[RMDB]
Chemical mapping of a 177-nucleotide RNA with 2A3 and DMS. Conditions: 150 mM KOAc, 10 mM MgCl2 and 150 mM bicine (pH 8.5), 24 C.
RNA sequence: GGGAACGACUCGAGUAGAGUCGAAAACGCAGCUGUUAAAUGGAGAAAUUGAUGAUAUUACAAUAACUGCAAAAGAUAAGAAUGUCAUUAUCAUUGGUGCUGGUGAUACAGGGGCAGACUGUGUAGCAGAUUUAUGCCCGUUCGCGGGCAUAAAUCUAAAAGAAACAACAACAACAAC
Reactivity to 2A3 in 0.01 (KOAc 150mM, MgCl2 10mM, bicine 150mM(pH8.5), 24C), signal-to-noise 2, nucleotides 027 to 126: c100g030c000a020g000c000u010g000u080u100a040a150a110u160g130g010a070g120a010a150a000u210u110g040a080u010g000a000u030a000u160u080a070c080a060a120u060a180a020c030u190g070c180a210a100a000a020g020a060u050a050a040g070a030a040u060g030u020c010a020u040u090a090u040c000a000u000u100g070g000u160g000c030u000g050g100u090g000a000u070a150c000a050g000g010g000g120c000a000g040a090c000u030g000u000g000u010a060g050c010
Reactivity to DMS in 0.01 (KOAc 150mM, MgCl2 10mM, bicine 150mM(pH8.5), 24C), signal-to-noise 1, nucleotides 027 to 126: c000g000c010a060g010c000u010g000u030u010a010a030a100u030g000g000a190g000a020a200a120u020u000g000a010u020g000a050u000a030u000u040a080c030a090a040u000a010a090c000u000g000c250a060a020a050a090g000a070u000a050a190g000a060a070u010g000u000c130a080u000u000a020u050c000a070u010u000g000g020u000g030c010u000g000g000u040g000a090u070a060c090a050g020g020g020g000c000a050g000a070c000u000g020u000g000u010a080g000c110

In probing experiments dimethyl sulfate is read out at A N1 and C N3, which are open when not base-paired.